[RMDB]
RNA sequence: GGGAACGACUCGAGUAGAGUCGAAAAGUGGGAUAGUUUGCUCUAUUUCUCGAUAGCCUGAUUGGCUGAUAUGCUCUUGAAAUCGUGCUAGAUCCAUGCCAAAAUAGAGAUCAAACGUAAAUCCAUGAAACCAGACCGUAUUCGUACGGUCUGGUUUAAAAGAAACAACAACAACAAC
Reactivity to 2A3 in 0.01 (KOAc 150mM, MgCl2 10mM, bicine 150mM(pH8.5), 24C), signal-to-noise 2, nucleotides 027 to 126: g090u050g010g040g020a060u050a130g050u010u010u030g000c000u000c000u000a010u000u050u000c110u000c060g070a130u070a050g040c020c010u110g080a170u020u130g030g000c030u000g010a030u050a070u270g010c020u050c000u060u140g100a050a070a080u100c060g040u010g000c000u050a040g020a210u000c080c030a050u120g050c010c000a000a030a080a030u010a000g020a000g000a080u300c010a000a020a020c020g030u040a020a190a000u080c000c000a010u120g040
Reactivity to DMS in 0.01 (KOAc 150mM, MgCl2 10mM, bicine 150mM(pH8.5), 24C), signal-to-noise 2, nucleotides 027 to 126: g000u010g000g000g010a080u010a120g000u010u000u000g000c010u010c000u000a010u000u010u000c090u000c150g010a130u000a060g020c010c060u010g010a080u000u000g020g010c030u010g010a060u000a070u000g010c090u010c170u010u000g000a050a070a060u000c070g030u010g000c010u000a070g000a100u010c070c120a040u010g010c120c110a040a010a030a000u000a040g000a010g010a110u010c030a000a020a010c010g000u010a070a100a130u000c000c000a030u010g000
The data come from the RNA Mapping Database (RMDB), library OK2TST. This 177-nucleotide RNA was probed chemically with 2A3 and DMS. DMS adducts were read by reverse transcription with MarathonRT. In probing experiments dimethyl sulfate is read out at A N1 and C N3, which are open when not base-paired.